[RMDB]
RNA sequence: GGGAACGACUCGAGUAGAGUCGAAAAGCACUGCCUGUUUAUGGUGGAAAUUAAUGUCAAAACCAUAGGAGCCGCGUUGGGUCGUGGAAGUUCUAUGAAACCGUAUCAUAGGAUAUGGGCGACGCAGCUAUAAUAUUUAAUUCGUUAAAUAUUAUAGAAAAGAAACAACAACAACAAC
Reactivity to DMS in 0.01 (KOAc 150mM, MgCl2 10mM, bicine 150mM(pH8.5), 24C), signal-to-noise 5, nucleotides 027 to 126: g010c070a190c070u010g010c010c010u010g010u030u020u010a010u000g010g000u000g010g000a160a100a060u020u030a110a090u060g010u010c060a060a180a190a070c040c000a020u000a030g020g000a060g000c030c020g010c080g000u010u020g000g000g010u010c000g000u000g010g000a070a300g000u000u000c000u010a000u000g010a020a110a110c150c190g000u020a080u000c000a040u010a020g000g000a000u010a030u030g000g000g000c020g000a020c050g010c060a040g000
Reactivity to 2A3 in 0.01 (KOAc 150mM, MgCl2 10mM, bicine 150mM(pH8.5), 24C), signal-to-noise 4, nucleotides 027 to 126: g070c010a010c110u050g000c010c000u100g060u120u090u040a020u040g010g020u050g040g150a050a080a040u190u210a110a120u300g050u130c050a020a000a040a060c010c000a010u030a010g030g000a020g010c010c010g000c020g080u100u180g060g000g090u020c010g010u000g040g010a050a040g010u000u000c000u010a010u020g000a130a020a020c070c060g050u090a020u060c000a010u010a000g000g030a000u010a020u110g030g010g020c020g000a010c010g000c020a010g010
An RNA of 177 nucleotides, treated with DMS and 2A3 and read out base by base. 2A3 is a SHAPE reagent: it acylates the 2'-hydroxyl of flexible nucleotides of all four kinds. For DMS, 10,249 sequencing reads were counted. It was measured as part of the RMDB library OK1LIB. The reactions ran in a buffer of 150 mM KOAc, 10 mM MgCl2 and 150 mM bicine (pH 8.5), at 24 C.